This 177-nucleotide RNA was probed chemically with 2A3 and DMS. The data come from the RNA Mapping Database (RMDB), library OK1LIB. As a SHAPE reagent, 2A3 marks flexible, mostly unpaired nucleotides at the ribose 2'-OH. Conditions: 150 mM KOAc, 10 mM MgCl2 and 150 mM bicine (pH 8.5), 24 C.

RNA sequence: GGGAACGACUCGAGUAGAGUCGAAAAACGAAGCCAACGUGUACCUCUGCCCUCAAUAUUUACAUAGCGCCAUCUUUCUACUGCUGCGGAGAGUGUCCAGGGUUAGAGAAGGCGACUCUUCAGACUCUCUAGGGUGGACUUUCGAGUCCACCCUAGAAAAAGAAACAACAACAACAAC
Reactivity to 2A3 in 0.01 (KOAc 150mM, MgCl2 10mM, bicine 150mM(pH8.5), 24C), signal-to-noise 3, nucleotides 027 to 126: a000c070g030a060a010g090c080c030a020a020c080g030u050g030u070a100c000c020u040c000u050g070c040c030c000u040c020a110a040u100a120u200u280u120a130c140a090u200a090g030c000g000c020c060a120u050c060u000u120u050c030u030a070c030u070g190c010u030g000c050g020g030a110g020a060g080u070g030u000c020c000a000g070g010g080u050u090a010g000a000g020a080a000g050g030c040g100a070c000u030c000u020u030c000a010g020a200c030u050c000
Reactivity to DMS in 0.01 (KOAc 150mM, MgCl2 10mM, bicine 150mM(pH8.5), 24C), signal-to-noise 1, nucleotides 027 to 126: a240c080g030a110a110g020c010c030a100a020c050g000u000g010u020a080c010c000u000c060u050g000c000c040c010u000c060a110a080u020a060u000u030u000a090c080a230u000a170g020c000g040c090c080a080u010c030u000u000u000c080u000a080c030u030g000c040u000g000c030g080g000a080g000a010g010u030g000u030c070c050a060g010g000g020u020u000a000g060a040g000a050a090g010g000c110g000a060c140u000c000u000u020c000a070g000a070c040u000c030